Overview: The data come from the RNA Mapping Database (RMDB), library OK2TST. An RNA of 177 nucleotides, treated with 2A3 and DMS and read out base by base. 2A3 adducts were read by reverse transcription with SuperScript II with manganese.
RNA sequence: GGGAACGACUCGAGUAGAGUCGAAAAAACGAGCAAUGAAAAGGCUUGUUAAUGUCUGUGCCAUUGGUGUGAUUAGAAGUGGUAAUAUUUCUCAAAUAUUUCUACCCUUGCUGGAGAACUUUUGUUACUAGUGAUACCAGUUCGCUGGUAUCACUAGAAAAGAAACAACAACAACAAC
Reactivity to 2A3 in 0.01 (KOAc 150mM, MgCl2 10mM, bicine 150mM(pH8.5), 24C), signal-to-noise 1, nucleotides 027 to 126: a000a070c030g020a020g040c030a030a170u190g220a150a210a050a000g020g000c040u000u020g000u000u030a090a110u100g040u000c060u050g000u020g000c000c000a010u030u030g020g030u070g030u060g090a130u040u140a030g080a240a000g010u020g020g000u020a080a000u090a080u030u060u000c100u010c010a080a100a030u120a080u010u110u000c020u070a190c000c000c000u050u200g060c090u120g010g080a020g040a020a030c030u000u200u130u160g020u060u000a050
Reactivity to DMS in 0.01 (KOAc 150mM, MgCl2 10mM, bicine 150mM(pH8.5), 24C), signal-to-noise 3, nucleotides 027 to 126: a020a020c030g000a010g010c030a040a040u000g000a120a090a130a120g010g010c010u000u010g000u000u000a080a090u000g010u000c050u020g010u000g010c030c030a050u010u000g010g020u000g000u010g000a100u000u000a090g010a080a050g010u010g000g010u010a050a050u010a040u000u010u010c080u000c060a070a070a060u000a050u000u000u000c040u010a090c030c020c040u000u000g000c080u000g000g000a110g000a090a080c140u000u000u000u010g010u010u010a170